[RMDB]
RNA sequence: GGGAACGACUCGAGUAGAGUCGAAAACAAGGUGGUCGCGCCAGACCUUUAUAUCGCCGUUGGCAUUUCCGGCGCGAUCCAGCAUCUGGCUGGCAUGAAGGACAGCCGCAUCAUCGUCGCUAUCAAAUAUAAUAGGGGUGUUCGCACCCCUAUUAUAAAAAGAAACAACAACAACAAC
Reactivity to 2A3 in 0.01 (KOAc 150mM, MgCl2 10mM, bicine 150mM(pH8.5), 24C), signal-to-noise 1, nucleotides 027 to 126: c020a040a000g040g060u070g030g000u070c030g010c000g010c000c000a040g000a070c010c000u060u150u040a210u050a040u060c060g000c040c060g300u160u270g030g000c040a030u090u050u050c020c050g020g000c020g000c000g000a010u010c030c000a030g040c010a020u020c090u130g030g000c000u000g000g000c030a050u150g110a120a080g050g060a030c010a000g010c030c030g020c020a040u080c010a010u030c010g040u000c020g020c100u030a050u140c010a040a090a280
Reactivity to DMS in 0.01 (KOAc 150mM, MgCl2 10mM, bicine 150mM(pH8.5), 24C), signal-to-noise 4, nucleotides 027 to 126: c090a110a140g000g030u010g020g000u000c020g040c010g000c010c010a060g000a070c300c050u000u010u010a080u010a100u010c170g020c010c020g030u000u000g020g020c050a160u000u000u010c030c030g010g020c010g010c010g000a010u000c020c040a070g000c080a070u010c110u010g000g000c010u010g020g020c120a060u000g010a090a080g010g000a070c020a020g000c020c010g010c140a020u000c070a060u000c070g010u010c050g000c070u000a040u000c070a070a060a130
Source: RMDB library OK2TST, as collected in RNAgym. This 177-nucleotide RNA was probed chemically with 2A3 and DMS. Reactivities are given for positions 27 through 126. The RNA was probed in 150 mM KOAc, 10 mM MgCl2 and 150 mM bicine (pH 8.5) at 24 C.